[RMDB]
Chemical mapping of a 177-nucleotide RNA with DMS and 2A3. DMS adducts were read by reverse transcription with MarathonRT. 2A3 is a SHAPE reagent: it acylates the 2'-hydroxyl of flexible nucleotides of all four kinds. The RNA was probed in 150 mM KOAc, 10 mM MgCl2 and 150 mM bicine (pH 8.5) at 24 C. Reactivities are given for positions 27 through 126.

RNA sequence: GGGAACGACUCGAGUAGAGUCGAAAAAGAUAUGGAGGAAAUCUCUAGCGUGCUCUAUGAAGUACAGGAACAUGUAUCGGAAACGAUACUUUGUACUGUAUGGAGAGUCGGGUUUCCUCCUAAGUCACUAGAUUUAGUUGUUCGCAACUAAAUCUAGAAAAGAAACAACAACAACAAC
Reactivity to DMS in 0.01 (KOAc 150mM, MgCl2 10mM, bicine 150mM(pH8.5), 24C), signal-to-noise 6, nucleotides 027 to 126: a110g000a020u000a140u010g000g000a010g010g000a010a010a010u000c000u010c100u010a130g100c300g030u010g030c000u000c000u000a220u010g010a180a140g000u000a000c000a020g000g000a110a160c300a020u000g000u000a000u000c000g000g000a050a040a070c010g010a020u000a010c000u000u000u000g010u000a150c000u000g000u000a010u000g000g000a020g000a010g020u000c060g010g010g010u000u000u000c000c010u000c000c000u000a010a080g010u000c030a290
Reactivity to 2A3 in 0.01 (KOAc 150mM, MgCl2 10mM, bicine 150mM(pH8.5), 24C), signal-to-noise 5, nucleotides 027 to 126: a000g020a000u040a000u080g000g000a020g030g070a010a030a030u070c140u060c090u260a100g090c150g300u300g040c020u000c010u030a300u200g000a020a010g000u000a000c000a010g040g040a170a000c010a010u030g000u000a010u000c000g010g000a000a010a030c000g000a000u000a000c000u060u020u060g020u020a010c000u000g000u010a010u030g000g010a010g000a000g000u040c040g000g010g000u000u000u000c000c010u000c000c000u000a000a000g000u010c000a010